[RMDB]
RNA sequence: GGGAACGACUCGAGUAGAGUCGAAAAAAGCACUGGAGAUGACCCUUGAGGGAGGUUUCACUCUGCAGAGAUCUCUCCCCCGUCGCGUGGCGGGUGGGAACACGUUAGUGCGGGGGGAUUUGGGAUGUGCACAUCCAGGCUUCGGCCUGGAUGUGCAAAAAGAAACAACAACAACAAC
Reactivity to 2A3 in 0.01 (KOAc 150mM, MgCl2 10mM, bicine 150mM(pH8.5), 24C), signal-to-noise 1, nucleotides 027 to 126: a000a000g080c030a060c020u030g000g000a060g060a100u030g080a100c000c000c000u000u010g070a240g020g020g000a020g000g050u090u000u000c020a020c000u050c000u040g100c000a040g000a000g000a060u040c000u000c040u020c000c000c000c000c020g050u100c010g010c050g010u090g000g040c090g020g000g100u180g020g010g040a040a020c010a000c000g060u160u110a020g000u020g060c000g000g000g000g010g000g000a000u060u130u120g030g000g000a060u120g000

The record gives the reactivity of an RNA of 177 nucleotides to 2A3. The RNA was probed in 150 mM KOAc, 10 mM MgCl2 and 150 mM bicine (pH 8.5) at 24 C. For 2A3 the reverse transcriptase was SuperScript II with manganese. For 2A3, 484 sequencing reads were counted. Source: RMDB library RFM100, as collected in RNAgym.